An RNA of 170 nucleotides, treated with 2A3 and DMS and read out base by base. DMS adducts were read by reverse transcription with MarathonRT. It was measured as part of the RMDB library 15KLIB. The reactions ran in a buffer of 150 mM KOAc, 10 mM MgCl2 and 150 mM bicine (pH 8.5), at 24 C.

[RMDB]
RNA sequence: GGGAACGACUCGAGUAGAGUCGAAAAUCCAGCCCCUCCCCGGUCCGAGAGAAGGGGGACUCCGGGACUCCUUGCAUGUUGGGGACGAAGCCGCCCCCGGGCGCUCCCCUCGAUCCACCUUCGAGGGUAACAACCUUCUUCGGAAGGUUGAAAAGAAACAACAACAACAAC
Reactivity to 2A3 in 0.01 (KOAc 150mM, MgCl2 10mM, bicine 150mM(pH8.5), 24C), signal-to-noise 8, nucleotides 027 to 129: u020c000c010a010g060c000c010c000c000u020c020c010c010c020g030g040u070c050c040g060a070g010a010g020a140a110g020g000g000g000g010a010c020u010c020c010g010g000g040a040c010u020c010c010u070u100g080c060a120u150g050u130u100g060g000g000g000a010c040g060a080a010g030c010c000g040c010c020c000c000c010g010g000g000c070g030c040u060c000c000c000c010u000c000g030a020u010c020c040a050c030c030u030u030c010g000a030g000g000g000u020a020a000
Reactivity to DMS in 0.01 (KOAc 150mM, MgCl2 10mM, bicine 150mM(pH8.5), 24C), signal-to-noise 9, nucleotides 027 to 129: u030c010c000a120g030c020c020c010c010u000c010c020c060c040g020g020u030c050c050g010a120g010a120g000a110a050g000g000g000g010g000a060c040u020c070c060g060g000g010a110c030u010c040c030u010u000g020c140a070u000g000u050u030g000g000g000g000a030c040g010a110a110g000c070c020g020c050c020c000c020c010g000g000g020c110g020c090u000c070c000c010c000u020c020g010a090u000c060c120a050c100c030u020u010c030g020a040g040g030g030u010a060a120